[RMDB]
RNA sequence: GGGAACGACUCGAGUAGAGUCGAAAAUGUGGAAGUCCUGCUCGGGGCGGAAGCAUUAAAACCAUUCGAGCUAGUCAAUGCGUGGCGUGUCUCUCCGCAGCGCGUUGGCGAAUGUAAAGAGUGACUAUUGACCACGCAACGUUCGCGUUGCGUGGAAUCACAAAACAUUGUUCGCAAUGUUUUGUGAAAAAGAAACAACAACAACAAC
Reactivity to DMS in 0.01 (KOAc 150mM, MgCl2 10mM, bicine 150mM(pH8.5), 24C), signal-to-noise 3, nucleotides 027 to 156: u010g010u010g020g000a300a230g000u000c020c020u000g020c160u000c110g010g020g010g020c000g020g000a300a300g010c030a040u000u000a030a090a090a090c030c050a120u000u000c030g000a120g010c030u000a090g000u000c010a030a000u010g020c010g010u000g020g050c000g020u010g010u000c080u000c040u000c130c000g000c000a110g020c000g010c010g030u010u000g010g020c020g000a070a030u010g020u000a030a060a100g020a060g000u000g010a100c050u000a120u000u000g010a160c000c000a030c000g000c000a030a020c000g020u000u000c290g020c050g030u000u000g000c000g030u000g010g000a010a040
Reactivity to 2A3 in 0.01 (KOAc 150mM, MgCl2 10mM, bicine 150mM(pH8.5), 24C), signal-to-noise 6, nucleotides 027 to 156: u030g000u020g050g060a040a060g000u000c000c010u040g040c060u050c060g010g000g000g000c010g020g010a010a000g000c010a010u050u190a020a010a010a040c080c030a040u100u160c050g010a010g000c010u020a010g010u010c000a010a010u010g000c000g020u030g120g000c010g000u010g000u000c010u000c000u000c010c000g000c020a080g000c000g000c000g000u000u000g000g000c000g000a000a000u050g040u150a020a010a010g010a010g000u010g010a000c010u060a120u110u250g070a060c000c010a000c000g000c000a000a000c000g030u050u060c160g000c000g110u010u000g000c000g000u000g000g000a000a000
The record gives the reactivity of an RNA of 207 nucleotides to DMS and 2A3. 2A3 adducts were read by reverse transcription with SuperScript II with manganese.